An RNA of 177 nucleotides, treated with 2A3 and DMS and read out base by base. It was measured as part of the RMDB library OK2TRN. The RNA was probed in 150 mM KOAc, 10 mM MgCl2 and 150 mM bicine (pH 8.5) at 24 C.

RNA sequence: GGGAACGACUCGAGUAGAGUCGAAAAAGAUUAGGGAGGAUUGACUGUGUCAGGGAUGGCGGGUGGCCUCUCUCGCUGCCAGGGCCCUUGUCAGAGCAGCCAGGCUGGACAGACGGCCUCCCUCCUCCUGAAUAGUGUGAUUCGUCACACUAUUCAGAAAAGAAACAACAACAACAAC
Reactivity to 2A3 in 0.01 (KOAc 150mM, MgCl2 10mM, bicine 150mM(pH8.5), 24C), signal-to-noise 6, nucleotides 027 to 126: a010g120a100u210u250a040g010g000g010a010g030g040a120u070u110g040a060c020u040g000u030g080u160c020a010g040g050g080a120u090g030g010c030g030g040g030u090g040g000c030c000u010c010u010c010u010c040g050c070u050g000c020c020a030g010g040g020c010c000c020u040u090g100u080c070a030g010a030g110c040a010g030c020c000a040g070g010c020u030g000g020a010c010a020g020a040c020g030g000c000c000u010c010c000c000u000c000c010u020c010
Reactivity to DMS in 0.01 (KOAc 150mM, MgCl2 10mM, bicine 150mM(pH8.5), 24C), signal-to-noise 7, nucleotides 027 to 126: a070g000a170u010u010a050g020g000g010a040g010g000a080u000u010g020a100c020u000g010u000g000u010c030a040g010g010g020a150u000g000g000c030g010g010g020u010g010g010c020c030u000c070u010c090u010c120g000c040u000g010c030c040a140g000g010g000c010c190c040u000u010g010u010c120a080g010a110g020c060a130g000c020c030a060g010g010c010u000g000g000a040c040a040g010a090c080g010g000c010c000u000c000c000c000u000c030c010u000c060